[RMDB]
RNA sequence: GGGAACGACUCGAGUAGAGUCGAAAAAGGUCAGCAGGGUCAGAGUAUGUGAGGUCAGAGGGCAUGAGGGUCACAGGUCAGCAAGGUGUGAGGAGCACAAGCCAGGGUGCCCCGAGGAGGAGGGUGGUCAGGAGACUCUAUUCGUAGAGUCUCCUGAAAAAGAAACAACAACAACAAC
Reactivity to DMS in 0.01 (KOAc 150mM, MgCl2 10mM, bicine 150mM(pH8.5), 24C), signal-to-noise 2, nucleotides 027 to 126: a070g000g020u000c040a080g020c060a070g010g010g000u000c060a080g020a090g020u000a070u010g010u010g000a100g010g010u010c040a100g020a130g010g000g020c090a090u000g010a110g020g000g020u000c060a040c080a070g020g010u010c090a090g030c130a050a080g020g010u000g020u010g010a140g010g000a180g000c040a020c040a030a120g010c040c030a080g000g000g020u000g000c060c020c000c070g000a080g000g000a080g020g000a070g000g000g010u010g000g000
Reactivity to 2A3 in 0.01 (KOAc 150mM, MgCl2 10mM, bicine 150mM(pH8.5), 24C), signal-to-noise 1, nucleotides 027 to 126: a000g030g000u040c030a050g020c010a010g060g000g060u060c010a070g010a010g130u100a030u180g080u020g070a070g000g080u000c010a010g060a060g080g000g000c060a040u060g020a120g000g000g000u030c030a030c020a040g040g060u120c000a000g000c040a100a160g050g000u050g040u040g010a070g070g030a010g000c000a010c020a010a000g030c000c000a040g060g000g060u050g030c000c010c000c000g000a040g040g000a060g080g010a070g020g030g000u040g000g010
This 177-nucleotide RNA was probed chemically with DMS and 2A3.
For DMS the reverse transcriptase was MarathonRT.
It was measured as part of the RMDB library OK2TST.
The DMS profile rests on 1,874 reads.